Annotation
The record gives the reactivity of an RNA of 177 nucleotides to 2A3 and DMS. Reactivities are given for positions 27 through 126. The DMS profile rests on 2,443 reads. For 2A3 the reverse transcriptase was SuperScript II with manganese. The RNA was probed in 150 mM KOAc, 10 mM MgCl2 and 150 mM bicine (pH 8.5) at 24 C. For DMS the reverse transcriptase was MarathonRT.

[RMDB]
RNA sequence: GGGAACGACUCGAGUAGAGUCGAAAAGACUCUGUAAAGUUCAGGACUCACACCCAAAAGGUGUUGGGAUGUUCAUUCCCUGAUGGGCAUCCCACGGAUUGGGUUCUGGAUGAAGGGCUGAGUUGGUGUUACUCUAUACGUUCGCGUAUAGAGUAACAAAAGAAACAACAACAACAAC
Reactivity to 2A3 in 0.01 (KOAc 150mM, MgCl2 10mM, bicine 150mM(pH8.5), 24C), signal-to-noise 3, nucleotides 027 to 126: g000a000c000u020c010u020g030u070a000a050a030g010u000u020c010a010g000g010a000c000u090c110a050c030a010c010c020c000a030a040a010a010g000g000u030g000u050u080g020g000g010a000u000g000u000u000c000a010u020u020c010c000c000u000g010a010u010g010g010g040c000a000u020c010c050c010a010c060g090g040a200u300u300g010g000g000u000u010c000u010g010g000a000u020g010a000a010g020g000g000c020u010g010a010g010u000u030g070g050u040
Reactivity to DMS in 0.01 (KOAc 150mM, MgCl2 10mM, bicine 150mM(pH8.5), 24C), signal-to-noise 2, nucleotides 027 to 126: g010a030c000u000c000u000g020u010a060a040a100g010u000u010c010a000g000g020a010c010u010c030a080c020a020c000c010c030a110a120a190a300g000g000u000g010u000u030g010g000g010a010u000g000u000u000c000a000u000u000c000c000c000u000g010a020u000g000g000g010c010a010u000c000c000c000a030c190g010g000a180u030u030g030g010g020u000u000c020u000g010g000a010u000g020a190a010g000g000g010c040u000g000a040g020u000u000g000g010u000